[RMDB]
Structure probing data (DMS and 2A3) for a 177-nucleotide construct. Values cover nucleotides 27 to 126. The DMS profile rests on 1,353 reads. For 2A3, 1,624 sequencing reads were counted.
RNA sequence: GGGAACGACUCGAGUAGAGUCGAAAAUCUCGAACCGGCUGAUAGAAGCGUCGUAACUCCGAUCUUCCCAGUUCAGAGGGCACUUCUAUCUCCGGGGUCCCGUCGAGCCGAGCUUCGUCGGUGGAUCAGAUGUUCGUUACUUCGGUAACGAACAUCUAAAAGAAACAACAACAACAAC
Reactivity to DMS in 0.01 (KOAc 150mM, MgCl2 10mM, bicine 150mM(pH8.5), 24C), signal-to-noise 1, nucleotides 027 to 126: u020c030u000c000g000a190a170c000c010g020g070c140u050g000a080u000a000g000a000a000g000c060g000u000c040g000u040a050a300c060u000c060c000g040a000u000c000u060u000c140c090c130a220g000u000u000c000a080g000a050g000g040g000c000a020c000u000u000c000u000a000u020c000u020c000c000g000g010g020g000u000c000c000c000g050u000c080g000a090g030c120c030g010a020g000c130u000u040c220g000u020c020g040g050u000g020g010a100u000c100
Reactivity to 2A3 in 0.01 (KOAc 150mM, MgCl2 10mM, bicine 150mM(pH8.5), 24C), signal-to-noise 2, nucleotides 027 to 126: u030c010u010c010g040a100a120c020c010g000g050c190u060g010a010u000a000g000a000a000g010c020g000u040c040g090u110a090a090c000u000c010c000g000a000u000c070u110u160c050c030c050a010g010u000u000c020a020g010a030g000g020g030c000a000c010u010u000c000u000a010u000c000u000c000c000g000g010g000g000u020c000c010c000g010u000c000g020a010g000c010c050g230a070g000c070u090u060c010g070u000c020g020g080u070g120g000a070u050c060